Structure probing data (DMS and 2A3) for a 207-nucleotide construct. The reactions ran in a buffer of 150 mM KOAc, 10 mM MgCl2 and 150 mM bicine (pH 8.5), at 24 C.
RNA sequence: GGGAACGACUCGAGUAGAGUCGAAAACACCUAAGUGCAACACUGUUCAAAUUGCGGGAAAGCCCUAAAGCUUUGCUAACCAAGCUGUCCUAGAAAUGGGAUGGUGGCCAGGUGAAAGACCUUGGGUACGGUAAAAUCAGCAAAGAUGCAACAAUGGCCUUAAUGUUAUCUUCGGAUAACAUUAAGGAAAAGAAACAACAACAACAAC
Reactivity to DMS in 0.01 (KOAc 150mM, MgCl2 10mM, bicine 150mM(pH8.5), 24C), signal-to-noise 3, nucleotides 027 to 156: c060a130c020c040u000a070a110g010u000g030c050a070a090c010a040c010u000g030u020u000c050a090a080a190u000u000g000c050g010g030g000a040a090a170g020c040c020c020u010a050a080a060g010c000u000u000u000g010c030u010a060a040c010c020a170a260g020c000u000g030u000c000c000u010a040g010a070a090a260u000g020g000g010a020u000g010g010u010g020g050c000c030a060g050g040u000g000a110a100a150g000a060c030c010u000u010g020g020g030u010a040c100g000g010u000a080a040a110a040u000c070a040g010c030a010a040a060g010a180u000g010c100a030a030c050a050a080u010g020g000
Reactivity to 2A3 in 0.01 (KOAc 150mM, MgCl2 10mM, bicine 150mM(pH8.5), 24C), signal-to-noise 6, nucleotides 027 to 156: c090a040c010c020u070a130a030g070u060g100c040a080a030c030a040c140u080g050u020u050c040a070a120a170u100u080g030c060g010g010g030a060a130a100g050c020c010c010u160a180a140a020g020c000u000u010u000g000c000u000a000a010c010c080a020a000g010c010u000g000u000c000c000u010a030g060a070a100a060u070g020g000g010a000u010g020g010u070g010g000c010c000a010g000g000u020g030a050a030a010g050a020c010c010u080u100g020g000g000u060a140c020g000g000u010a010a000a010a050u030c040a020g000c000a000a010a010g010a010u060g020c010a040a030c020a030a110u100g110g010